[RMDB]
RNA sequence: GGGAACGACUCGAGUAGAGUCGAAAAGCGAGGAGUCACAACGCAACUGUAUGCGUUGAACACAUCGAGGAGAACUCGAUGUGUUCCCUGACAUACAGUUGUCAGGCAGACUCCUUGAAGGUACAUAGCUAGGGCGUGAUUUCGAUCAUGCUCUAGCAAAAGAAACAACAACAACAAC
Reactivity to DMS in 0.01 (KOAc 150mM, MgCl2 10mM, bicine 150mM(pH8.5), 24C), signal-to-noise 9, nucleotides 027 to 126: g010c020g000a000g000g000a010g010u000c000a090c120a150a190c200g000c010a010a010c010u000g010u010a010u000g010c010g010u000u000g000a010a000c010a010c000a010u000c010g010a020g000g000a230g020a140a170c000u000c000g010a000u000g010u000g000u010u000c010c030c030u010g010a160c010a000u000a010c010a010g000u000u000g010u040c070a070g000g020c250a240g000a010c010u000c000c000u000u000g000a040a060g010g010u010a070c100a100u020a140
Reactivity to 2A3 in 0.01 (KOAc 150mM, MgCl2 10mM, bicine 150mM(pH8.5), 24C), signal-to-noise 9, nucleotides 027 to 126: g100c030g010a000g000g000a000g000u010c010a020c060a180a050c070g000c000a010a000c010u020g010u030a010u010g000c010g010u010u010g000a000a000c000a000c000a000u000c000g000a000g040g040a210g060a290a190c000u000c000g000a000u000g000u000g000u000u000c000c000c000u050g020a110c000a000u030a000c010a010g010u010u010g010u030c020a010g020g020c090a020g000a000c000u000c000c000u000u000g000a000a000g070g000u110a070c050a110u130a070